[RMDB]
RNA sequence: GGGAACGACUCGAGUAGAGUCGAAAAACUGCCAUACGUGACAGAAACACGCCUUACCAGGACUAAACAGCGUGUCUAAAAAACAGUCCUUCAUACCUGAUCUGGAGGGUAGAUCAGGAAUACUAAAAAAAUCGGGUGAAGUUCGCUUCACCCGAAAUCUGGAGUAAGACUUCGGUCUUACUCCAGAAAAAGAAACAACAACAACAAC
Reactivity to 2A3 in 0.01 (KOAc 150mM, MgCl2 10mM, bicine 150mM(pH8.5), 24C), signal-to-noise 1, nucleotides 027 to 156: a000c010u040g010c020c020a070u090a130c050g090u070g060a020c010a030g100a070a150a000c000a000c000g000c000c020u020u070a000c030c090a000g000g020a000c000u070a170a040a000c020a010g010c030g000u010g010u080c100u070a000a000a030a000a000a000c030a000g000u010c040c000u020u170c040a050u050a180c000c000u000g000a000u000c000u010g060g040a050g030g030g060u020a020g000a000u020c030a010g010g050a000a000u060a050c060u120a000a050a030a020a040a000a180u010c000g000g010g000u010g000a010a050g020u020u060c120g000c110u000u010c000a000c000c000c000g000a000a000a000